[RMDB]
RNA sequence: GGGAACGACUCGAGUAGAGUCGAAAAACGAAGGAUCGCGUAAAUCAGGAAGAAAAAGAUAUCCUGAAAAACCGCAACGCCAGGAAGCAGCAGGUAGACGCGGGCGUUAAAAUUGAUGAGCAGUACCAGGCUGAACUGCUAUCGCUACAGGCGCAGCCGAGCACUAGGGUUUCGACCCUAGUGCUCGAAAAGAAACAACAACAACAAC
Reactivity to 2A3 in 0.01 (KOAc 150mM, MgCl2 10mM, bicine 150mM(pH8.5), 24C), signal-to-noise 2, nucleotides 027 to 156: a000c050g010a080a010g050g040a070u090c050g000c020g030u060a060a070a070u000c010a000g030g010a040a080g070a090a180a030a020a020g070a060u200a070u070c000c010u020g000a100a000a000a050a000c040c010g000c050a020a000c040g010c020c010a010g050g010a040a010g020c020a010g000c040a020g080g000u070a050g020a060c060g000c020g010g050g000c010g000u010u060a050a080a090a080u160u110g010a050u020g030a010g000c000a000g000u040a080c030c020a030g060g000c020u010g010a060a010c010u010g000c020u030a020u090c040g020c030u060a040c050a060g040g040c030g000c040a010g030c000
Reactivity to DMS in 0.01 (KOAc 150mM, MgCl2 10mM, bicine 150mM(pH8.5), 24C), signal-to-noise 1, nucleotides 027 to 156: a130c010g000a180a090g000g010a090u010c040g050c040g010u000a150a100a190u000c030a030g000g010a040a180g010a020a130a030a160a180g000a260u000a130u000c030c000u040g010a000a050a020a160a050c050c050g010c030a100a040c030g000c030c010a170g000g010a090a160g010c040a060g000c040a010g020g000u000a070g010a100c090g060c010g010g020g030c030g040u010u000a020a030a050a150u000u010g050a090u050g000a010g000c000a050g000u010a060c040c040a100g010g010c000u010g000a040a160c010u000g000c010u000a060u010c060g000c060u020a020c020a110g040g010c010g030c040a060g010c040